RNA sequence: GGGAACGACUCGAGUAGAGUCGAAAAGGCGGCCGUGAGACCAUUGUCGCCGAAAGCGGGUUAUGCUGUGGGCGUUUGAGCACAUAAUGGUGGAAGGCACCGGCCGGCGACAGGCUAUCUCGCAUUAGGGCGAAUGUUGGUUCGCCAGCGUUCGCCCAAAAGAAACAACAACAACAAC
Reactivity to 2A3 in 0.01 (KOAc 150mM, MgCl2 10mM, bicine 150mM(pH8.5), 24C), signal-to-noise 7, nucleotides 027 to 126: g030g010c010g010g020c010c030g030u030g010a080g040a020c040c000a020u010u060g000u000c000g000c010c000g010a050a000a000g040c010g000g020g020u100u090a060u180g010c020u010g020u090g100g030g020c030g020u040u070u170g050a020g010c030a020c010a060u140a090a070u100g040g000u030g030g050a070a050g050g000c000a010c000c000g010g040c020c000g000g000c000g010a010c020a010g030g040c020u060a040u070c020u030c020g000c030a120u100u300a130
Reactivity to DMS in 0.01 (KOAc 150mM, MgCl2 10mM, bicine 150mM(pH8.5), 24C), signal-to-noise 8, nucleotides 027 to 126: g010g020c030g000g000c020c030g010u010g000a140g020a070c070c020a060u020u010g010u010c020g010c000c000g010a040a040a020g000c010g000g000g010u020u020a070u030g000c020u000g000u010g010g000g010c010g010u030u030u040g020a160g010c050a060c100a080u010a060a050u010g000g030u010g000g010a150a110g010g010c020a080c030c030g000g010c020c000g000g000c010g000a050c060a120g010g000c070u010a140u010c010u010c000g010c070a150u040u020a180

Conditions: 150 mM KOAc, 10 mM MgCl2 and 150 mM bicine (pH 8.5), 24 C. Structure probing data (2A3 and DMS) for a 177-nucleotide construct. It was measured as part of the RMDB library OK1LIB. For DMS the reverse transcriptase was MarathonRT. 2A3 adducts were read by reverse transcription with SuperScript II with manganese.